RNA sequence: GGGAACGACUCGAGUAGAGUCGAAAAUGACGCGGCUGCUACAGGACUCACUUGGAGGUAAUAGCACAACGCUUCUCAUUGCAUGUGUGUCCGCAGAUGCCGACAACACGGGUGAGACGGUACGCACCCACUAAAUAGGCUUCGGCCUAUUUAGUGGAAAAGAAACAACAACAACAAC
Reactivity to DMS in 0.01 (KOAc 150mM, MgCl2 10mM, bicine 150mM(pH8.5), 24C), signal-to-noise 5, nucleotides 027 to 126: u010g010a110c140g020c030g000g000c050u000g010c030u000a060c120a170g020g010a070c000u000c020a070c080u010u010g010g000a030g000g000u000a090a120u000a030g010c020a090c190a080a130c150g010c030u000u000c040u000c020a090u010u000g000c070a050u000g010u000g000u000g000u000c000c080g000c060a090g000a110u000g000c000c070g000a050c060a040a060c070a060c070g000g000g000u000g010a090g000a080c080g000g000u000a110c100g000c050a110c100
Reactivity to 2A3 in 0.01 (KOAc 150mM, MgCl2 10mM, bicine 150mM(pH8.5), 24C), signal-to-noise 5, nucleotides 027 to 126: u100g030a010c040g030c020g060g020c020u070g010c010u070a020c040a130g050g050a050c020u020c050a050c060u080u090g100g020a010g040g020u080a100a080u070a110g050c020a030c050a180a160c150g000c030u090u020c010u010c020a080u070u220g090c050a060u080g010u000g000u000g000u010c000c020g000c010a040g010a200u190g040c000c000g020a030c020a030a030c030a010c040g030g030g020u030g010a030g020a010c030g000g050u080a010c040g010c020a040c020